[RMDB]
RNA sequence: GGGAACGACUCGAGUAGAGUCGAAAAGAUAUGGAAUGUCCGUAGAGCGAUGAAAUACCCUCGGAAACGAGGGUAUGGAGCUCGAAACGGAGCAUUCCUAAGUCAAAGCUACAGUUCGCUGUAGCAACCAUAGCACCUAGUUCGCUAGGUGCUAUGGAAAAGAAACAACAACAACAAC
Reactivity to DMS in 0.01 (KOAc 150mM, MgCl2 10mM, bicine 150mM(pH8.5), 24C), signal-to-noise 4, nucleotides 027 to 126: g010a050u010a300u000g010g010a000a000u000g010u000c000c010g010u000a300g010a020g020c000g000a130u010g020a150a070a010u000a000c000c000c000u000c000g010g010a090a060a210c010g020a010g010g010g010u000a000u010g000g000a080g010c020u000c000g010a060a130a050c010g000g000a060g010c000a010u010u000c010c000u000a020a100g010u010c070a130a110a190g010c000u010a010c000a020g010u000u010c300g030c000u000g000u000a000g010c010a070a130
Reactivity to 2A3 in 0.01 (KOAc 150mM, MgCl2 10mM, bicine 150mM(pH8.5), 24C), signal-to-noise 2, nucleotides 027 to 126: g010a020u100a040u140g010g000a010a000u020g030u030c020c020g000u030a020g010a000g020c000g300a300u030g020a050a010a000u010a010c000c010c000u020c010g010g000a040a040a040c020g000a000g000g000g040u000a000u010g000g000a000g020c000u000c010g000a010a000a010c020g020g020a090g090c010a020u020u020c000c000u000a100a000g020u020c060a090a070a060g000c010u010a000c000a010g060u050u150c190g050c220u000g000u000a010g000c000a000a010
Chemical mapping of a 177-nucleotide RNA with DMS and 2A3. Conditions: 150 mM KOAc, 10 mM MgCl2 and 150 mM bicine (pH 8.5), 24 C. DMS adducts were read by reverse transcription with MarathonRT. For DMS, 5,078 sequencing reads were counted. For 2A3 the reverse transcriptase was SuperScript II with manganese.